[RMDB]
RNA sequence: GGGAACGACUCGAGUAGAGUCGAAAAGAUAUGGACUACCACGAUGCUCCACCGUCAUGCAGAGACGUGGAUCGGAAACGAUCCCGUCGACGAAGCAUGACGGUGGAGCAUUAGUAGUCCUAAGUCAUCUAAGGAACUGGUUCGCCAGUUCCUUAGAAAAAGAAACAACAACAACAAC
Reactivity to DMS in 0.01 (KOAc 150mM, MgCl2 10mM, bicine 150mM(pH8.5), 24C), signal-to-noise 2, nucleotides 027 to 126: g000a080u000a300u000g000g000a040c000u000a000c040c300a170c280g000a010u000g030c000u000c010c000a020c000c000g020u000c010a020u030g000c000a030g000a150g000a010c020g030u020g000g020a000u000c030g010g000a110a100a260c020g010a000u000c000c000c000g010u000c000g000a090c270g000a130a110g000c000a010u000g030a010c010g000g030u000g000g000a000g000c000a000u000u000a060g010u000a000g000u000c000c000u010a010a060g020u000c030a120
The record gives the reactivity of an RNA of 177 nucleotides to DMS.
The reactions ran in a buffer of 150 mM KOAc, 10 mM MgCl2 and 150 mM bicine (pH 8.5), at 24 C.